Conditions: 150 mM KOAc, 10 mM MgCl2 and 150 mM bicine (pH 8.5), 24 C. The record gives the reactivity of an RNA of 177 nucleotides to DMS. It was measured as part of the RMDB library TTRINS.

RNA sequence: GGGAACGACUCGAGUAGAGUCGAAAAGAUAUGGAAGUAAAUUAUCAGUGAACGCGAUGAAAUUACGUAACAUCUAUCGGAAACGAUAGUGGUAAUGGAGCGUGCUGAUAAUUUACUUCCUAAGUCACUAGUUCCUUUUCUUCGGAAAAGGAACUAGAAAAGAAACAACAACAACAAC
Reactivity to DMS in 0.01 (KOAc 150mM, MgCl2 10mM, bicine 150mM(pH8.5), 24C), signal-to-noise 1, nucleotides 027 to 126: g000a040u000a300u010g000g000a040a000g010u000a000a000a010u000u000a000u000c000a000g020u000g020a180a020c000g000c000g000a140u020g000a140a140a010u000u000a000c020g010u000a050a130c220a040u000c000u000a030u010c000g000g010a180a090a300c000g010a010u000a000g020u000g050g000u000a020a020u000g000g000a060g040c000g040u000g000c000u020g000a000u010a000a010u000u000u000a000c000u000u000c000c000u000a010a100g000u000c030a250